[RMDB]
An RNA of 177 nucleotides, treated with DMS and 2A3 and read out base by base. The DMS profile rests on 1,934 reads. Reactivities are given for positions 27 through 126. 2A3 adducts were read by reverse transcription with SuperScript II with manganese. The RNA was probed in 150 mM KOAc, 10 mM MgCl2 and 150 mM bicine (pH 8.5) at 24 C. For 2A3, 2,096 sequencing reads were counted.

RNA sequence: GGGAACGACUCGAGUAGAGUCGAAAAUGAUUGAGCGUAGCACACACUCAGACUGUACGACAGUCUGACACAGACCUACGCUAGUGCAUCGUGUGUGUGAUAUCGAUGUAGCACGAAAAUGAAGUAAGUGGUCUAUAGUCUUCGGACUAUAGACCACAAAAGAAACAACAACAACAAC
Reactivity to DMS in 0.01 (KOAc 150mM, MgCl2 10mM, bicine 150mM(pH8.5), 24C), signal-to-noise 3, nucleotides 027 to 126: u000g000a130u000u000g000a080g010c020g020u000a040g010c080a050c040a100c040a130c300u000c030a010g010a020c020u000g020u010a150c250g000a100c040a000g010u010c000u000g010a010c110a050c160a040g050a100c270c010u000a020c010g020c020u000a050g030u000g000c070a010u000c020g020u000g000u010g010u000g010u010g010a090u020a070u000c030g020a030u000g010u000a060g030c060a030c120g010a020a030a080a070u000g010a100a060g010u000a110a110
Reactivity to 2A3 in 0.01 (KOAc 150mM, MgCl2 10mM, bicine 150mM(pH8.5), 24C), signal-to-noise 2, nucleotides 027 to 126: u280g030a110u170u190g070a020g000c000g010u000a010g000c040a000c000a000c000a000c030u000c000a000g000a010c020u020g030u180a100c130g170a070c250a000g000u000c000u020g020a010c010a000c030a010g070a030c000c010u010a010c000g000c020u020a040g020u030g050c040a010u010c030g000u000g000u000g000u020g040u030g110a040u040a030u190c020g020a000u040g010u100a030g150c050a010c070g010a020a020a010a110u240g050a070a040g010u150a180a020